[RMDB]
RNA sequence: GGGAACGACUCGAGUAGAGUCGAAAAGCGACCGGCCAGUCGAUGAGUUCGAGGGCAGCGAGUGCCGCCAGACCUCCGUAGUAGGCCAGGUGCUCUGGCCGCGGAAUCUUCACUUGGCCGCAGAUCGCACGCAGCUGAAUUUCGAUUCAGCUGCGUGAAAAGAAACAACAACAACAAC
Reactivity to 2A3 in 0.01 (KOAc 150mM, MgCl2 10mM, bicine 150mM(pH8.5), 24C), signal-to-noise 4, nucleotides 027 to 126: g050c020g000a040c010c020g000g010c000c010a010g000u060c090g090a020u040g020a010g070u050u040c020g000a080g030g050g030c010a000g050c080g110a030g050u040g020c030c020g100c090c000a060g030a250c010c010u030c010c070g110u160a110g070u030a010g030g000c030c010a020g000g000u070g070c020u040c000u040g160g040c020c000g040c000g000g020a020a030u020c000u020u010c010a020c010u130u230g020g000c000c030g000c000a010g030a120u000c000g000
Reactivity to DMS in 0.01 (KOAc 150mM, MgCl2 10mM, bicine 150mM(pH8.5), 24C), signal-to-noise 2, nucleotides 027 to 126: g000c000g000a000c000c010g000g000c010c000a000g000u000c170g050a010u010g000a050g050u010u000c020g010a090g010g000g020c040a070g020c230g010a080g000u010g000c060c000g000c150c110a180g000a060c060c070u000c060c170g000u040a090g000u020a080g000g000c000c080a060g000g020u010g000c150u000c000u020g000g000c000c000g020c000g020g000a020a090u000c000u010u000c030a030c000u030u010g020g000c000c000g020c210a110g000a120u000c000g030

The data come from the RNA Mapping Database (RMDB), library OK1LIB. An RNA of 177 nucleotides, treated with 2A3 and DMS and read out base by base. For DMS, 2,960 sequencing reads were counted. For 2A3 the reverse transcriptase was SuperScript II with manganese. The RNA was probed in 150 mM KOAc, 10 mM MgCl2 and 150 mM bicine (pH 8.5) at 24 C.